[RMDB]
RNA sequence: GGGAACGACUCGAGUAGAGUCGAAAAAUAAAGCACGGCAAGCACAUGAAGCACAUGAAGCACUACAAGCACAUGAAGCAGUACAAGCACUACAAGCAGUAGAAGCAGCCGAAGCACAUGAAAAAAAUCAACUUAUUUGGUUCGCCAAAUAAGUUGAAAAAGAAACAACAACAACAAC
Reactivity to 2A3 in 0.01 (KOAc 150mM, MgCl2 10mM, bicine 150mM(pH8.5), 24C), signal-to-noise 1, nucleotides 027 to 126: a040u190a000a060a020g000c040a010c050g000g000c020a010a100g000c000a020c000a110u050g060a090a030g030c040a010c020a090u050g080a040a000g030c010a020c040u140a050c000a080a030g010c040a010c030a040u060g050a040a020g000c020a000g030u050a030c050a080a030g000c010a000c070u080a020c030a080a060g090c050a040g020u040a030g020a180a020g020c020a000g010c030c000g010a000a000g040c010a020c010a070u170g090a000a000a000a000a040a000a100
Reactivity to DMS in 0.01 (KOAc 150mM, MgCl2 10mM, bicine 150mM(pH8.5), 24C), signal-to-noise 1, nucleotides 027 to 126: a030u000a080a060a040g010c040a080c060g000g010c060a010a130g060c070a070c090a030u020g030a100a090g020c100a060c090a060u010g000a090a070g010c060a020c070u000a070c270a070a070g000c050a090c040a070u030g000a070a060g000c000a030g020u000a060c050a120a060g000c050a030c030u000a030c070a030a100g030c040a120g000u000a010g000a080a090g000c030a050g000c060c030g010a060a020g020c020a000c070a020u000g000a000a020a020a080a010a060a140